RNA sequence: GGGAACGACUCGAGUAGAGUCGAAAAACGGGGCUAGCUGCCGGGUGUUCCAUCCAUGGGAUCGGUGCCGAGUGAGGCUUAUCCCGGGGGGAUUGCCUCGGCCCCCUCCCUAACACGGGAGUCUCGGAAACACGUAGCUUCGGCUACGUGAAAAGAAACAACAACAACAAC
Reactivity to 2A3 in 0.01 (KOAc 150mM, MgCl2 10mM, bicine 150mM(pH8.5), 24C), signal-to-noise 9, nucleotides 027 to 129: a010c020g000g000g000g000c030u030a070g020c030u090g070c020c000g030g010g010u080g040u070u030c020c010a040u040c050c040a180u190g050g040g010a040u120c070g030g060u080g030c000c010g020a030g050u160g040a050g000g000c020u100u110a040u040c000c000c000g040g030g010g020g000g010a040u050u110g010c000c000u040c000g020g000c000c000c000c010c000u020c000c010c000u080a200a070c130a050c100g010g010g000a010g020u010c010u020c020g010g040a040a070a010
Reactivity to DMS in 0.01 (KOAc 150mM, MgCl2 10mM, bicine 150mM(pH8.5), 24C), signal-to-noise 6, nucleotides 027 to 129: a000c110g030g020g000g020c030u020a060g030c090u000g000c000c000g000g000g000u040g030u070u000c010c020a100u040c120c090a120u030g060g020g030a000u030c160g020g030u000g000c000c020g000a060g010u060g040a110g000g000c050u030u040a010u050c000c030c000g030g020g020g020g000g030a030u000u010g000c010c010u000c010g000g000c000c000c000c010c010u000c010c020c020u040a130a110c250a110c170g000g000g000a070g010u030c040u010c040g000g000a190a120a140